RNA sequence: GGGAACGACUCGAGUAGAGUCGAAAAGAAACCUACUCGAGCGAGGCGGAGAUCGACCCCCAGUUCGUGCGCGGCGACCUGAAGUUGCUUCGGCGGCUUCUUGUUCGCGUCCUGCGUGGAACGGCUCGUAUUACGUGUUGUUCGCAACACGUAAUACAAAAGAAACAACAACAACAAC
Reactivity to DMS in 0.01 (KOAc 150mM, MgCl2 10mM, bicine 150mM(pH8.5), 24C), signal-to-noise 2, nucleotides 027 to 126: g000a110a140a080c060c010u010a000c010u000c020g000a000g010c030g000a150g020g030c080g000g010a070g010a120u000c040g010a180c050c020c010c010c010a120g010u000u000c020g000u000g040c010g000c030g000g000c000g000a010c010c010u000g000a030a000g000u000u000g020c000u000u010c160g030g010c010g010g020c010u000u000c000u000u000g000u000u000c010g020c010g000u010c010c140u000g010c010g060u010g010g000a020a020c000g010g020c080u000c110